An RNA of 177 nucleotides, treated with DMS and 2A3 and read out base by base. It was measured as part of the RMDB library TTRDEL. DMS adducts were read by reverse transcription with MarathonRT. 2A3 adducts were read by reverse transcription with SuperScript II with manganese.
[RMDB]
RNA sequence: GGGAACGACUCGAGUAGAGUCGAAAAGAUAUGGAUUUAAUGGUGAGGGAGGUCGAUCGGAAACGAUCGACUACCCACCCUACCCACCACCCUUAAAUCCUAAGUCAAACACCCGUUCGCGGGUGAACCAAGAACCAUAGUUCGCUAUGGUUCUUGGAAAAGAAACAACAACAACAAC
Reactivity to DMS in 0.01 (KOAc 150mM, MgCl2 10mM, bicine 150mM(pH8.5), 24C), signal-to-noise 2, nucleotides 027 to 126: g000a040u010a180u010g000g000a020u020u000u000a000a010u000g000g030u000g000a140g020g020g000a300g010g000u000c010g000a000u010c000g000g010a050a010a060c000g000a000u000c000g010a020c000u000a020c020c010c070a160c170c140c110u020a130c050c010c080a090c200c000a010c010c000c080u000u000a000a010a000u000c000c000u000a020a090g010u000c040a180a130a240c010a000c000c010c000g030u000u000c170g030c000g000g000g000u000g000a030a090
Reactivity to 2A3 in 0.01 (KOAc 150mM, MgCl2 10mM, bicine 150mM(pH8.5), 24C), signal-to-noise 2, nucleotides 027 to 126: g010a020u030a030u110g000g000a000u020u010u010a020a000u030g030g020u010g050a290g060g020g030a040g080g000u010c020g010a010u000c010g000g030a040a030a000c000g010a010u010c000g000a010c010u010a030c010c010c000a050c000c010c000u100a190c000c010c030a050c060c000a000c000c010c000u000u030a000a000a000u010c000c020u030a050a000g020u030c020a070a200a020c010a020c040c010c020g000u090u110c300g020c020g050g000g000u020g010a020a040